[RMDB]
Structure probing data (2A3 and DMS) for a 177-nucleotide construct. For 2A3 the reverse transcriptase was SuperScript II with manganese. For DMS, 3,883 sequencing reads were counted.
RNA sequence: GGGAACGACUCGAGUAGAGUCGAAAAUAGUAACAUCAAAGAUCAUAUAAAUUUGAUUUUAAACCGAGAUGUAUCAUUUCAAGACUUAAGUGACAAUCCGUGCAAAGUGGACCUUUCAACACAGGCACUGUUCCCUUUAAUUCGUUAAAGGGAACAGAAAAGAAACAACAACAACAAC
Reactivity to 2A3 in 0.01 (KOAc 150mM, MgCl2 10mM, bicine 150mM(pH8.5), 24C), signal-to-noise 3, nucleotides 027 to 126: u080a030g100u040a020a040c000a010u020c010a100a000a030g040a030u040c020a030u150a040u090a280a240a210u170u050u020g010a010u010u040u030u140a110a100a030c060c060g030a030g000a220u020g070u080a060u140c040a040u050u160u090c070a060a050g030a080c020u080u130a120a050g040u040g090a010c030a060a060u020c060c050g040u020g030c030a100a000a060g020u060g050g030a070c010c050u060u140u050c090a060a060c020a000c020a040g010g000c050a010
Reactivity to DMS in 0.01 (KOAc 150mM, MgCl2 10mM, bicine 150mM(pH8.5), 24C), signal-to-noise 4, nucleotides 027 to 126: u000a110g010u000a110a060c050a030u000c000a110a110a090g010a040u010c020a040u010a300u000a090a080a150u000u010u000g000a040u000u010u010u010a040a130a120c160c100g000a160g000a020u000g020u000a070u000c060a040u000u000u000c070a060a120g000a090c060u000u010a020a100g010u000g020a060c080a050a090u000c050c050g020u000g000c040a050a050a080g020u000g010g010a110c100c040u010u000u000c070a060a040c060a030c090a060g000g000c110a080